[RMDB]
RNA sequence: GGGAACGACUCGAGUAGAGUCGAAAAGCUUCCUCAUGGCGCGGAGGUUUAACUGCGCUCGCUCCCCAUAUCGGUGUGGGCGCACCGGAUUUACAAAUUAAAGUCCUUUAGGGAGCGGAAAGGGACAAAAACUUGCACGUGUUCGCACGUGCAAGAACAGAUGUGAAGGGUUCGCCCUUCACAUCUGAAAAGAAACAACAACAACAAC
Reactivity to 2A3 in 0.01 (KOAc 150mM, MgCl2 10mM, bicine 150mM(pH8.5), 24C), signal-to-noise 2, nucleotides 027 to 156: g010c040u110u040c010c020u000c020a070u090g010g000c000g010c030g010g010a030g070g000u040u120u150a030a020c030u040g010c000g010c000u000c000g000c000u000c000c000c020c020a010u070a070u140c010g010g000u000g000u010g020g030g000c000g000c000a000c000c040g020g010a000u200u220u040a180c270a030a040a000u120u220a030a190a010g020u000c000c030u010u010u020a010g000g010g020a000g000c050g000g020a030a030a030g030g000g030a020c100a020a170a000a010a060c000u000u010g000c000a000c010g000u020g070u040u100c190g060c030a000c000g000u000g000c000a000a000g000a000a020
Reactivity to DMS in 0.01 (KOAc 150mM, MgCl2 10mM, bicine 150mM(pH8.5), 24C), signal-to-noise 2, nucleotides 027 to 156: g000c070u000u020c000c000u000c010a060u010g000g050c010g030c020g030g000a120g010g020u000u000u000a090a180c020u000g030c010g040c000u000c020g000c000u000c000c010c020c070a160u010a070u020c060g020g030u000g020u000g030g020g000c070g010c000a000c020c000g010g000a130u010u000u000a250c100a070a070a130u020u010a080a050a090g020u000c000c020u000u000u000a050g020g000g000a000g030c040g010g000a040a080a040g030g020g000a110c050a080a050a080a120a180c020u000u000g000c030a010c000g050u000g050u000u000c290g060c040a020c000g030u010g010c000a000a000g000a040a080
Annotation
Structure probing data (2A3 and DMS) for a 207-nucleotide construct. DMS adducts were read by reverse transcription with MarathonRT. The RNA was probed in 150 mM KOAc, 10 mM MgCl2 and 150 mM bicine (pH 8.5) at 24 C. For 2A3, 1,119 sequencing reads were counted. Values are in units of 0.01, from 0 to 300, in steps of 10.